[RMDB]
RNA sequence: GGGAACGACUCGAGUAGAGUCGAAAACGCGACGCUUACAGUGAACUUCGAACGAGAGCUAGAGAUGCCAUGCACUCUGAUUCAUAUGCGCUUUGGUUCGACAGCCCACCCGAUGCCGCAGGCUCUCGCGCUACGACUGCUUCGGCAGUCGUAGCGCAAAAGAAACAACAACAACAAC
Reactivity to 2A3 in 0.01 (KOAc 150mM, MgCl2 10mM, bicine 150mM(pH8.5), 24C), signal-to-noise 2, nucleotides 027 to 126: c060g000c010g050a050c010g050c100u030u090a130c000a100g060u010g060a200a040c000u040u030c100g050a060a090c110g040a040g000a000g010c000u070a020g000a000g020a120u040g020c040c120a090u300g000c020a000c040u050c030u030g120a250u090u100c060a010u180a090u300g050c010g010c050u000u010u010g040g000u010u010c030g090a100c070a010g000c000c000c000a010c000c030c030g050a110u060g040c030c010g000c040a000g110g000c000u000c000u100c080